[RMDB]
RNA sequence: GGGAACGACUCGAGUAGAGUCGAAAAUGAGGCUGGGAUCUACUGCGUAGCGGACCAGCUCAUGUUGACGGAACGUCCGCACUAAGCUUGCCAUCAAUAUGGGUGCCAUGGAGGAGUCCGUGGCAUUCAGGUUGGCUAAGGAGGGAUGAACCGGGCCGUUUUUUAGUUACUUCGGUAACUAAAAAACAAAAGAAACAACAACAACAAC
Reactivity to 2A3 in 0.01 (KOAc 150mM, MgCl2 10mM, bicine 150mM(pH8.5), 24C), signal-to-noise 2, nucleotides 027 to 156: u030g000a020g120g080c010u000g040g010g010a080u020c020u070a060c040u180g190c160g140u070a020g020c050g030g100a060c000c000a000g000c010u000c000a020u060g050u040u180g070a040c000g010g010a020a010c000g000u000c000c010g050c030a040c050u030a030a030g050c020u020u040g010c020c000a070u140c040a110a140u190a120u250g000g000g000u000g000c000c000a010u010g040g000a070g120g040a100g170u000c000c000g010u000g000g000c010a000u000u010c000a000g000g020u020u010g010g000c000u010a030a020g020g010a010g070g000g000a010u020g000a010a000c010c000g050g050g030c030c050
Reactivity to DMS in 0.01 (KOAc 150mM, MgCl2 10mM, bicine 150mM(pH8.5), 24C), signal-to-noise 1, nucleotides 027 to 156: u000g000a110g060g000c010u050g000g010g020a210u000c020u000a080c050u000g030c300g020u000a070g060c050g000g010a130c000c020a110g050c000u000c000a000u000g040u000u000g010a110c020g020g040a090a270c040g030u000c000c000g000c020a300c040u000a100a150g030c040u000u000g000c010c000a100u010c090a070a140u000a160u000g010g000g010u000g030c000c010a030u010g000g000a040g010g020a240g000u010c000c000g080u000g000g000c020a000u000u000c010a040g000g030u010u010g000g000c010u000a060a040g000g000a180g020g000g000a120u000g030a040a270c090c030g000g030g050c000c130
About this RNA
An RNA of 207 nucleotides, treated with 2A3 and DMS and read out base by base. Values cover nucleotides 27 to 156. Reactivities are rounded to 0.1 and cut off at 0 and 3. The DMS profile rests on 2,368 reads. 2A3 is a SHAPE reagent: it acylates the 2'-hydroxyl of flexible nucleotides of all four kinds.